This 177-nucleotide RNA was probed chemically with DMS and 2A3. In probing experiments dimethyl sulfate is read out at A N1 and C N3, which are open when not base-paired. Conditions: 150 mM KOAc, 10 mM MgCl2 and 150 mM bicine (pH 8.5), 24 C. The DMS profile rests on 2,695 reads. For DMS the reverse transcriptase was MarathonRT.
[RMDB]
RNA sequence: GGGAACGACUCGAGUAGAGUCGAAAACAGCGGCCACAACAUGAACCCUGUCUUCAUAUACUUGGUGCCGAAGCCCUGCCCCCGCGUGCGUAUCGUGCUCCCUGGUUUGUGCGCUCGGCCGGUACGCGGCAGUACGUAGUUUCGACUACGUACUGCCAAAAGAAACAACAACAACAAC
Reactivity to DMS in 0.01 (KOAc 150mM, MgCl2 10mM, bicine 150mM(pH8.5), 24C), signal-to-noise 2, nucleotides 027 to 126: c110a120g040c040g000g020c040c040a060c070a050a090c160a110u020g010a060a100c040c080c090u010g000u000c080u000u000c080a060u010a070u000a080c150u020u010g000g020u000g010c020c020g000a120a160g000c040c030c000u010g000c010c000c000c010c000g010c170g030u010g030c020g000u010a030u000c030g020u000g000c020u000c020c040c040u000g000g010u000u000u000g020u000g000c050g020c040u000c070g000g000c000c030g000g010u000a010c060g000c030
Reactivity to 2A3 in 0.01 (KOAc 150mM, MgCl2 10mM, bicine 150mM(pH8.5), 24C), signal-to-noise 1, nucleotides 027 to 126: c030a000g080c050g010g010c000c000a050c020a120a030c010a060u090g000a040a030c030c010c120u070g040u120c040u080u060c040a020u120a010u010a250c050u040u040g020g020u050g090c030c030g060a060a050g010c030c000c010u030g040c030c020c020c000c000g030c020g020u020g030c000g000u000a010u040c010g000u060g040c010u020c020c000c000u010g000g050u080u110u100g090u010g000c000g020c020u040c010g060g040c000c000g000g000u000a000c030g000c000